RNA sequence: GGGAACGACUCGAGUAGAGUCGAAAAGAUAUGGAACAUCAUCCGAUAAGCUCCUGUCGGAAACGACAGUGAGCUUUUGACGGGUGUUCCUAAGUCAAACGCGUUAAGUCUUCGGACUUAACGCGAAGAUGCUUAAUACCUUCGGGUAUUAAGCAUCAAAAGAAACAACAACAACAAC
Reactivity to DMS in 0.01 (KOAc 150mM, MgCl2 10mM, bicine 150mM(pH8.5), 24C), signal-to-noise 5, nucleotides 027 to 126: g010a040u000a300u010g000g000a010a020c000a010u000c020a130u010c050c090g010a160u000a010a020g000c000u000c010c000u000g000u000c000g010g000a070a050a090c010g000a010c000a000g010u000g010a010g000c000u000u000u010u000g000a300c300g010g000g010u000g000u000u000c000c010u000a020a100g000u000c030a080a110a190c020g010c010g000u000u000a000a010g010u000c000u000u010c230g020g010a020c000u000u000a010a000c000g010c000g000a010a040
Reactivity to 2A3 in 0.01 (KOAc 150mM, MgCl2 10mM, bicine 150mM(pH8.5), 24C), signal-to-noise 3, nucleotides 027 to 126: g010a000u050a020u080g000g010a010a000c010a010u040c010a090u100c040c070g070a120u070a250a020g000c000u000c000c000u010g000u000c000g020g000a100a020a030c010g010a000c000a000g030u070g080a000g000c030u000u000u010u010g000a000c000g030g000g000u000g000u000u000c000c000u000a050a000g030u010c040a090a040a070c020g000c000g000u010u010a000a000g000u020c010u060u190c300g030g000a010c000u000u000a000a000c000g000c000g000a000a010

The record gives the reactivity of an RNA of 177 nucleotides to DMS and 2A3. DMS adducts were read by reverse transcription with MarathonRT. For 2A3, 9,137 sequencing reads were counted. The DMS profile rests on 5,539 reads. Reactivities are given for positions 27 through 126.